This 207-nucleotide RNA was probed chemically with DMS and 2A3. Values cover nucleotides 27 to 156. The reactions ran in a buffer of 150 mM KOAc, 10 mM MgCl2 and 150 mM bicine (pH 8.5), at 24 C. The data come from the RNA Mapping Database (RMDB), library PDB130.
[RMDB]
RNA sequence: GGGAACGACUCGAGUAGAGUCGAAAAAGCCAGGAGGUUGGCUUAGAAGCAGCCACCCUUCAAAGAGUGCGUAAUAGCUCACUGGUCGAGUGACGAUGCGCCGAAAAUGAUCGGGGCUCAAGUGAUCUACCGAAGCUAUGGAUUCAACUCGCGAAGCGGUGACUUAACUGUUCGCAGUUAAGUCACCAAAAGAAACAACAACAACAAC
Reactivity to DMS in 0.01 (KOAc 150mM, MgCl2 10mM, bicine 150mM(pH8.5), 24C), signal-to-noise 2, nucleotides 027 to 156: a120g010c020c000a060g000g020a040g020g020u010u000g010g010c020u010u000a110g010a200a150g000c300a130g050c020c010a030c020c000c000u000u000c000a050a060a120g010a100g000u010g000c060g000u010a100a030u000a110g000c020u010c040a090c040u000g020g040u000c040g020a080g000u000g010a050c110g010a140u000g030c030g030c000c010g010a030a040a120a130u010g000a140u000c020g020g000g000g040c000u040c060a080a220g010u010g010a080u000c010u010a080c010c020g000a080a060g010c020u000a040u000g030g010a190u010u000c020a050a040c040u000c020g010c060g000a100a110g020c120
Reactivity to 2A3 in 0.01 (KOAc 150mM, MgCl2 10mM, bicine 150mM(pH8.5), 24C), signal-to-noise 5, nucleotides 027 to 156: a000g120c030c020a020g010g000a000g000g010u010u020g010g000c010u010u020a140g060a230a020g050c070a000g000c010c000a010c000c010c000u000u010c000a050a070a000g020a000g000u080g030c050g040u060a050a040u010a040g000c010u010c070a100c130u150g030g010u030c040g020a030g040u100g070a040c040g010a040u150g000c070g070c010c010g040a040a070a020a130u280g030a120u030c010g000g010g050g000c000u010c050a080a050g020u030g060a060u000c000u010a010c000c010g030a020a000g000c010u000a020u060g030g010a000u130u030c030a050a030c040u010c010g040c060g040a070a010g070c050